[RMDB]
RNA sequence: GGGAACGACUCGAGUAGAGUCGAAAAGCCUCUUCGGAGGCCCCCUUGCGUACUACUCGAGGCAACGACAUGGCUCGCUAAUACUCCCAAAUAGGAGGAUAACGAGCCAACAGCGUUGCUCCCCACCGAGUAUCGCUCUCAAUUCCUUCGGGAAUAAUUUAGUAGACUCAUUCGUGAGUCUACUAAAAAAAGAAACAACAACAACAAC
Reactivity to 2A3 in 0.01 (KOAc 150mM, MgCl2 10mM, bicine 150mM(pH8.5), 24C), signal-to-noise 2, nucleotides 027 to 156: g010c020c000u020c000u040u060c270g140g000a020g000g030c000c000c050c000c000u070u130g070c020g010u120a160c040u000a010c000u000c000g000a010g010g020c000a010a000c000g160a070c030a110u040g010g000c000u020c000g000c000u000a020a010u120a300c010u030c010c000c020a120a300a180u220a080g000g000a000g000g010a020u030a030a030c000g000a020g000c010c010a000a000c000a000g000c010g000u000u000g000c010u060c000c000c000c000a040c040c010g000a010g000u010a150u300c000g020c030u030c000u010c000a020a080u070u040c000c000u040u140c270g090g000g000a020a050u130a050a010
Reactivity to DMS in 0.01 (KOAc 150mM, MgCl2 10mM, bicine 150mM(pH8.5), 24C), signal-to-noise 1, nucleotides 027 to 156: g010c020c020u000c000u000u000c250g080g010a040g040g000c000c000c050c010c020u010u020g020c050g020u000a150c040u020a010c000u000c000g010a300g030g010c010a040a020c030g020a120c070a300u000g010g020c000u000c000g020c000u000a050a120u010a160c000u000c000c020c000a060a120a240u000a070g000g020a000g030g020a170u000a020a010c000g000a020g030c010c030a010a030c090a130g000c010g000u000u010g000c000u010c000c060c030c120a300c090c020g000a030g000u010a030u010c050g030c030u040c030u010c010a180a060u000u000c010c030u000u000c250g080g030g010a070a000u000a050a090
Structure probing data (2A3 and DMS) for a 207-nucleotide construct. The RNA was probed in 150 mM KOAc, 10 mM MgCl2 and 150 mM bicine (pH 8.5) at 24 C. For DMS the reverse transcriptase was MarathonRT. For 2A3, 1,371 sequencing reads were counted. Source: RMDB library RNAMAK, as collected in RNAgym.